[RMDB]
RNA sequence: GGGAACGACUCGAGUAGAGUCGAAAACAUGUGAUCGGAUCUAUCAUGCGAUCGGAUCUGACGAUCGCUCGAUCGUGCUCCAUGGAUCAUGGUCAUGACAUGAGACAUGCAUGCACUAGAGCUAGUACGCGGUCUCAUAGUUCGCUAUGAGACCGCGAAAAGAAACAACAACAACAAC
Reactivity to 2A3 in 0.01 (KOAc 150mM, MgCl2 10mM, bicine 150mM(pH8.5), 24C), signal-to-noise 3, nucleotides 027 to 126: c060a060u240g130u170g090a090u000c030g050g020a000u010c020u050a030u080c080a090u300g250c110g050a010u010c100g060g010a040u030c040u050g050a020c040g020a080u130c100g050c040u020c000g060a070u160c130g010u000g020c010u040c010c000a020u000g040g000a020u010c020a020u020g030g130u110c110a160u260g160a090c000a010u000g010a020g020a010c000a000u000g020c030a000u160g000c010a000c030u000a000g000a010g050c020u000a040g070u020a030
Reactivity to DMS in 0.01 (KOAc 150mM, MgCl2 10mM, bicine 150mM(pH8.5), 24C), signal-to-noise 2, nucleotides 027 to 126: c080a030u000g000u000g010a140u020c000g000g010a030u000c030u000a080u000c150a220u000g010c190g000a000u000c160g010g000a020u020c050u000g010a120c080g010a140u000c150g000c020u000c010g000a160u030c230g000u000g010c010u000c300c000a000u000g000g040a110u000c010a030u000g010g000u010c300a110u010g000a120c000a000u010g000a000g020a210c000a010u000g040c170a040u010g030c010a000c020u010a190g000a070g010c020u020a080g020u000a150
Conditions: 150 mM KOAc, 10 mM MgCl2 and 150 mM bicine (pH 8.5), 24 C.
Chemical mapping of a 177-nucleotide RNA with 2A3 and DMS.
DMS adducts were read by reverse transcription with MarathonRT.
Reactivities are given for positions 27 through 126.
The DMS profile rests on 1,063 reads.